The record gives the reactivity of an RNA of 177 nucleotides to DMS and 2A3.
It was measured as part of the RMDB library OK2TST.
For DMS the reverse transcriptase was MarathonRT.
The RNA was probed in 150 mM KOAc, 10 mM MgCl2 and 150 mM bicine (pH 8.5) at 24 C.

RNA sequence: GGGAACGACUCGAGUAGAGUCGAAAAAUCGACAAGCCGGCAGCCGAAGAGUCGGCAGCGCCGCAGCCCGGCGAACAACCGCCUGUGCAGUACUCGUUCGCCGGACGCAAUGCCGUCGGCGCCAAUCCUAAACAUUGGAUUUCGAUCCAAUGUUUAGAAAAGAAACAACAACAACAAC
Reactivity to DMS in 0.01 (KOAc 150mM, MgCl2 10mM, bicine 150mM(pH8.5), 24C), signal-to-noise 6, nucleotides 027 to 126: a090u010c060g000a120c140a090a110g030c060c040g020g020c010a080g020c030c040g000a080a150g000a110g020u010c010g010g010c030a060g010c080g030c060c110g010c070a070g020c030c010c030g010g000c000g010a020a010c020a110a040c050c040g000c020c150u010g010u000g010c010a030g000u000a090c240u010c170g010u000u000c000g010c000c000g010g000a010c050g000c120a080a080u010g010c050c050g010u010c010g010g010c020g020c040c130a080a100u010c100
Reactivity to 2A3 in 0.01 (KOAc 150mM, MgCl2 10mM, bicine 150mM(pH8.5), 24C), signal-to-noise 5, nucleotides 027 to 126: a010u080c020g050a030c030a090a030g040c050c020g010g000c040a040g080c030c040g110a110a050g080a040g210u040c000g010g000c000a010g000c030g010c020c030g000c020a020g040c020c010c000g010g000c010g000a000a000c010a020a010c010c020g070c050c100u240g130u290g040c020a020g010u070a090c070u090c190g010u020u000c000g000c000c010g000g000a010c020g000c020a020a130u130g030c020c020g020u100c000g020g000c000g000c000c000a030a050u060c000

Reactivities are given for positions 27 through 126.